[RMDB]
RNA sequence: GGGAACGACUCGAGUAGAGUCGAAAAGCUGUUAUCUGACCAAUAACAGAAUGCACCACAGCGUAAAAUCAUCUGAUUGGGUGAGUUGGUCGCACCGCCAUUUGACGAACGAACGCCAAGCCUAAGCACUACGAGUAUGUGUUCGCACAUACUCGAAACGUCUUAAUAGGUUCGCCUAUUAAGACGUAAAAGAAACAACAACAACAAC
Reactivity to 2A3 in 0.01 (KOAc 150mM, MgCl2 10mM, bicine 150mM(pH8.5), 24C), signal-to-noise 9, nucleotides 027 to 156: g010c000u000g000u000u000a000u010c000u010g000a000c000c000a010a000u000a000a000c000a000g030a060a090u130g030c040a040c040c020a030c040a030g040c020g050u100a040a090a070a070u060c020a030u000c040u100g070a200u120u200g140g000g000u020g010a020g010u000u040g010g000u010c010g010c020a010c010c010g050c020c010a070u070u060u100g040a040c030g030a150a020c040g020a060a010c020g030c020c020a050a030g020c020c030u140a070a040g060c060a060c130u170a060c070g000a000g000u000a000u000g010u000g010u030u060c090g050c030a000c000a000u010a000c000u000c000g000a010a010
Reactivity to DMS in 0.01 (KOAc 150mM, MgCl2 10mM, bicine 150mM(pH8.5), 24C), signal-to-noise 4, nucleotides 027 to 156: g000c000u000g010u000u000a010u010c000u000g000a070c070c050a300a020u000a010a030c010a020g000a120a110u010g000c050a120c020c040a080c090a080g000c040g010u000a060a040a110a120u000c020a070u010c060u000g000a120u010u000g000g000g040u000g010a300g020u010u010g020g010u000c030g020c020a070c040c000g000c070c020a140u000u000u000g020a060c030g000a110a110c100g010a110a070c030g030c010c020a040a180g010c050c030u000a050a080g000c050a120c040u000a170c020g010a050g010u000a010u000g020u000g020u000u000c300g000c000a010c000a010u000a000c010u000c000g000a010a060